[RMDB]
RNA sequence: GGGAACGACUCGAGUAGAGUCGAAAAAGAUUUCCGUCAUGUGCGCAUGGCGAGACAAUCGCACUGUUCUUUGCAGGCAUAAAGAAAUCGACGGGAUGUGGUCUAUCUAUGUCCCUUCGCACGAUGGCGAUUGGAAUUGGGACCACUUUGAUUACGCAUAGUUAGUCCUGUUCGCAGGACUAACUAUAAAAGAAACAACAACAACAAC
Reactivity to 2A3 in 0.01 (KOAc 150mM, MgCl2 10mM, bicine 150mM(pH8.5), 24C), signal-to-noise 3, nucleotides 027 to 156: a000g000a010u040u020u040c010c000g000u000c010a020u020g020u020g020c120g000c090a010u030g000g010c010g040a090g020a040c080a010a060u030c030g000c010a120c070u060g060u140u070c040u080u110u160g010c040a070g040g000c020a050u120a130a140a020g070a030a080a050u080c070g020a020c040g020g000g070a050u100g020u010g000g010u000c020u050a170u090c030u030a010u200g120u010c000c000c000u000u010c000g000c020a060c160g290a120u230g170g000c010g000a000u000u000g000g010a020a020u010u030g000g000g000a000c000c000a000c000u030u070u110g040a040u030u140a050c050g020c080
Reactivity to DMS in 0.01 (KOAc 150mM, MgCl2 10mM, bicine 150mM(pH8.5), 24C), signal-to-noise 2, nucleotides 027 to 156: a120g010a260u000u000u010c000c010g020u000c030a110u000g030u010g040c100g040c040a110u000g010g000c010g000a090g000a070c150a090a090u010c050g040c040a180c030u020g020u000u000c070u000u000u000g000c070a140g040g010c060a120u000a060a060a140g000a060a040a050u000c050g000a250c060g000g010g000a070u000g010u010g000g000u000c020u000a120u000c050u000a040u010g010u010c020c000c010u000u000c000g040c060a110c060g040a210u000g030g010c010g020a050u010u010g020g030a050a080u000u000g000g020g000a040c010c000a030c040u000u000u000g000a130u000u000a090c040g030c100